[RMDB]
RNA sequence: GGGAACGACUCGAGUAGAGUCGAAAAGGCGACUACGACGCCCGCGAGGUGUUCGGUGACGAGAAGGCCAUCUGGUGGCAGCGCGCCGUGGCGGUCUGGCCGGACUAUGCCAGCUACCAGACCAAGAGUGUAGAAUGGGGUUCGCCCCAUUCUACACAAAAGAAACAACAACAACAAC
Reactivity to 2A3 in 0.01 (KOAc 150mM, MgCl2 10mM, bicine 150mM(pH8.5), 24C), signal-to-noise 1, nucleotides 027 to 126: g020g000c010g060a050c010u090a030c020g060a020c030g030c000c000c010g240c130g060a230g080g000u020g020u130u020c050g070g040u090g120a120c060g020a030g020a160a050g080g010c030c020a020u000c050u050g070g000u020g060g000c020a050g080c090g010c010g000c040c020g030u000g010g050c030g020g020u030c020u040g070g090c100c080g060g010a040c030u010a000u240g030c000c000a000g000c000u010a030c000c000a000g020a010c010c010a050a050g130a000
Reactivity to DMS in 0.01 (KOAc 150mM, MgCl2 10mM, bicine 150mM(pH8.5), 24C), signal-to-noise 1, nucleotides 027 to 126: g030g000c040g020a180c060u000a070c050g000a040c040g000c010c030c030g030c190g000a130g000g010u000g000u010u000c050g030g010u000g010a240c090g000a130g010a080a130g020g000c050c080a110u020c090u010g000g020u000g000g030c080a070g000c050g030c050g030c000c020g000u010g050g010c030g000g000u000c030u000g000g020c080c090g000g000a080c100u000a180u020g010c000c000a060g000c000u000a070c040c010a020g000a090c090c050a100a130g000a180

Structure probing data (2A3 and DMS) for a 177-nucleotide construct. It was measured as part of the RMDB library OK2TST. For 2A3 the reverse transcriptase was SuperScript II with manganese. For 2A3, 843 sequencing reads were counted.